[RMDB]
RNA sequence: GGGAACGACUCGAGUAGAGUCGAAAAGAAAGAAAGAAGCCGCCAGAGGUCGAAAGGGGACGACGCACCGAAAGCUAAUGCUUUCGGUCACGAGAAAUGUGGGUUUCCUCGCCCCACCUGGCGGUAACACACGUCACUUUUUCGAAAGUGACGUGUGAAAAGAAACAACAACAACAAC
Reactivity to 2A3 in 0.01 (KOAc 150mM, MgCl2 10mM, bicine 150mM(pH8.5), 24C), signal-to-noise 2, nucleotides 027 to 126: g060a000a090a010g060a020a140a000g120a090a020g000c000c000g010c010c000a000g020a020g020g020u020c000g030a010a000a020g020g000g000g030a000c010g000a000c010g020c020a000c010c010g000a000a000a000g000c040u200a260a080u300g000c000u000u020u000c010g000g000u010c010a090c090g160a120g010a030a000a000u030g000u000g010g010g020u010u020u090c000c000u000c010g000c000c000c010c000a000c010c000u000g000g010c000g000g000u000a000a000
Reactivity to DMS in 0.01 (KOAc 150mM, MgCl2 10mM, bicine 150mM(pH8.5), 24C), signal-to-noise 1, nucleotides 027 to 126: g010a190a140a260g010a100a110a200g040a070a170g000c000c000g030c000c000a010g000a300g000g020u070c000g000a090a080a000g020g010g020g010a040c010g000a020c000g030c030a110c000c000g000a030a020a000g010c020u000a110a160u060g000c000u000u000u000c000g000g010u000c030a000c170g000a030g000a000a000a000u000g000u000g000g010g000u030u000u000c000c010u000c000g010c220c000c020c010a050c020c010u000g000g030c000g000g000u010a000a080
Structure probing data (2A3 and DMS) for a 177-nucleotide construct. For 2A3, 1,769 sequencing reads were counted. Values cover nucleotides 27 to 126. The RNA was probed in 150 mM KOAc, 10 mM MgCl2 and 150 mM bicine (pH 8.5) at 24 C.